Overview
The record gives the reactivity of an RNA of 177 nucleotides to 2A3 and DMS. 2A3 adducts were read by reverse transcription with SuperScript II with manganese. The RNA was probed in 150 mM KOAc, 10 mM MgCl2 and 150 mM bicine (pH 8.5) at 24 C. The 2A3 profile rests on 5,739 reads.

RNA sequence: GGGAACGACUCGAGUAGAGUCGAAAAGGCCGCGUAUCACGAAGAGAGAUAUAGAGCAAGUGAUACGAAAGAAAAGAGAAAGGCCAGACUACUUGAGCUCUGUGUCUCUCUAGAGUAGUCGAAAGAAGGGAUUAUCUAUGUUCGCAUAGAUAAUCCCAAAAGAAACAACAACAACAAC
Reactivity to 2A3 in 0.01 (KOAc 150mM, MgCl2 10mM, bicine 150mM(pH8.5), 24C), signal-to-noise 4, nucleotides 027 to 126: g000g000c000c000g050c010g020u000a000u000c000a000c020g060a040a020g020a010g000a010g000a000u020a020u090a250g000a000g010c030a100a050g000u000g000a000u020a000c040g030a020a070a010g080a010a090a000a010g160a010g070a120a140a000g000g000c010c000a000g000a000c000u010a000c000u010u000g020a010g000c000u000c010u020g160u000g040u090c000u000c000u000c000u000a010g000a000g020u000a000g000u000c000g010a000a010a000g100a030a080
Reactivity to DMS in 0.01 (KOAc 150mM, MgCl2 10mM, bicine 150mM(pH8.5), 24C), signal-to-noise 5, nucleotides 027 to 126: g020g000c000c000g000c000g000u000a000u010c020a000c000g020a130a260g000a030g000a020g010a160u030a290u010a030g020a030g010c010a130a290g000u000g010a000u000a010c010g010a040a080a120g000a120a060a110a100g000a160g000a110a090a150g000g000c000c000a150g000a000c000u020a000c000u000u000g000a160g000c000u010c000u000g010u050g000u010c010u000c000u000c000u010a300g000a000g000u000a000g000u000c000g030a030a080a050g000a140a080